Chemical mapping of a 177-nucleotide RNA with DMS and 2A3. 2A3 adducts were read by reverse transcription with SuperScript II with manganese. It was measured as part of the RMDB library M2PK50. The reactions ran in a buffer of 150 mM KOAc, 10 mM MgCl2 and 150 mM bicine (pH 8.5), at 24 C.
RNA sequence: GGGAACGACUCGAGUAGAGUCGAAAACGGUCGAAAUUCGUUUCGACCGAAUAUGCUAGCUGAGCACAGCUGCAAUGCAAAGCUGAAAGCCAGCUGCAAGCGCGAGUUCGGCGUUCGCGCCGAACAACCGAGUUAUUUGAUUCGUCAAAUAACUCGGAAAAGAAACAACAACAACAAC
Reactivity to DMS in 0.01 (KOAc 150mM, MgCl2 10mM, bicine 150mM(pH8.5), 24C), signal-to-noise 4, nucleotides 027 to 126: c010g010g010u000c000g010a010a000a040u000u020c190g020u010u000u010c000g000a010c000c000g010a050a030u010a120u000g020c000u000a020g020c000u000g010a150g010c020a120c010a010g000c000u010g000c150a140a110u010g010c140a070a120a040g010c000u010g000a070a110a100g010c010c000a010g000c000u000g010c030a050a090g010c160g000c160g000a180g010u010u000c010g010g000c010g030u000u010c170g030c000g000c000c010g010a000a010c020a060a120
Reactivity to 2A3 in 0.01 (KOAc 150mM, MgCl2 10mM, bicine 150mM(pH8.5), 24C), signal-to-noise 4, nucleotides 027 to 126: c010g000g000u000c000g010a000a010a010u120u090c180g050u020u000u010c000g000a000c010c000g000a010a010u100a020u030g030c070u110a020g000c010u010g030a020g040c010a010c010a210g000c010u030g020c100a100a060u240g040c040a120a140a060g000c000u010g020a170a040a010g010c000c010a000g000c010u010g000c030a050a040g050c070g010c030g110a110g050u000u010c000g020g000c010g030u040u060c150g000c000g000c030c010g000a000a000c010a000a000